[RMDB]
RNA sequence: GGGAACGACUCGAGUAGAGUCGAAAAUAGAUUUUUCUCAUUGAUGUCUUGGAAGCUUAGGGAAUACUUUGUUGUCACAGAGUAUUUGAUCAAGACUCACUUUGUGCCAUUGUUCCAUGGGCUGACCUCACCAUGUAAUCUUCGGAUUACAUGGUGAAAAAGAAACAACAACAACAAC
Reactivity to DMS in 0.01 (KOAc 150mM, MgCl2 10mM, bicine 150mM(pH8.5), 24C), signal-to-noise 5, nucleotides 027 to 126: u010a080g000a070u010u010u010u000u000c020u000c040a150u010u010g010a060u010g000u000c020u000u000g000g010a300a100g020c080u000u000a110g020g000g000a040a020u000a020c100u000u000u000g010u000u010g010u010c140a080c000a000g010a000g010u000a020u000u000u010g010a100u000c090a040a060g000a060c110u000c060a040c160u000u010u000g020u000g000c050c010a070u000u000g000u000u000c020c020a100u000g010g010g000c030u000g000a100c150c130
Reactivity to 2A3 in 0.01 (KOAc 150mM, MgCl2 10mM, bicine 150mM(pH8.5), 24C), signal-to-noise 4, nucleotides 027 to 126: u150a020g120a090u110u030u030u020u000c030u000c030a060u030u120g080a060u120g040u050c020u060u040g030g020a050a030g030c040u060u030a050g210g010g050a030a020u030a080c020u090u080u050g070u090u130g120u130c030a000c000a020g000a000g010u030a100u060u050u070g050a060u110c040a060a040g020a080c000u000c020a010c020u050u070u040g040u040g050c000c010a020u040u050g010u060u020c030c050a050u070g010g050g000c050u030g070a100c000c000